RNA sequence: GGGAACGACUCGAGUAGAGUCGAAAAUAUAAAUAAGAAUGCCGGUCUGUUCCGGAGAAACCAAGUGGAAUGCUACGUGCAUAAAUGCACGUAGCUAAAGACCCGAAGGCUAGCAAAAGCUAGCCAAGAGUAAUACUAGCUUCGGCUAGUAUUACUCAAAAGAAACAACAACAACAAC
Reactivity to 2A3 in 0.01 (KOAc 150mM, MgCl2 10mM, bicine 150mM(pH8.5), 24C), signal-to-noise 2, nucleotides 027 to 126: u120a020u060a020a160a050u200a040a010g070a140a010u070g090c000c030g000g000u050c130u190g190u130u030c000c000g000g000a010g010a050a010a000c050c030a080a000g130u190g090g050a080a020u100g000c010u000a000c000g010u010g010c010a030u140a270a200a050u110g000c000a000c000g010u000a010g000c000u000a010a010a010g010a040c000c000c040g040a080a030g000g010c000u000a010g000c000a060a140a230a160g000c010u000a000g000c000c010a000a010
Reactivity to DMS in 0.01 (KOAc 150mM, MgCl2 10mM, bicine 150mM(pH8.5), 24C), signal-to-noise 1, nucleotides 027 to 126: u110a100u040a110a010a150u060a140a120g030a180a070u010g010c000c020g030g000u050c200u050g010u040u010c020c040g080g000a070g000a140a070a180c060c010a050a040g000u080g000g000a050a070u040g000c000u000a000c050g000u000g000c010a100u010a030a070a090u010g000c010a010c000g010u010a000g000c030u010a000a080a130g000a100c050c000c040g000a110a100g000g010c020u000a000g010c010a070a100a100a110g000c000u000a010g000c000c000a000a020